This 177-nucleotide RNA was probed chemically with DMS.
Conditions: 150 mM KOAc, 10 mM MgCl2 and 150 mM bicine (pH 8.5), 24 C.
It was measured as part of the RMDB library TTRDES.
The DMS profile rests on 840 reads.
DMS adducts were read by reverse transcription with MarathonRT.
[RMDB]
RNA sequence: GGGAACGACUCGAGUAGAGUCGAAAAAAAAGAUAUGGAGUCUGUGGAGUGCGAAACCACGAAGAACUUUCUCGGAAACGAGAAAGGGAGUGGGUAAGCACGAUGAAACAGACUCCUAAGUCAAAAACGUUACUCUGUAGUUCGCUACAGAGUAACGAAAAGAAACAACAACAACAAC
Reactivity to DMS in 0.01 (KOAc 150mM, MgCl2 10mM, bicine 150mM(pH8.5), 24C), signal-to-noise 1, nucleotides 027 to 126: a050a140a100a050g000a040u000a300u000g050g010a030g000u000c000u000g000u000g020g000a020g040u000g000c010g000a200a200a050c000c020a040c000g000a120a100g040a160a160c000u000u000u000c000u000c000g000g000a080a050a220c010g000a000g000a000a000a020g000g010g000a000g010u000g000g010g010u010a080a300g020c000a000c000g000a060u010g000a120a160a030c000a000g000a000c010u000c000c000u000a010a120g020u020c020a060a090a130a090a120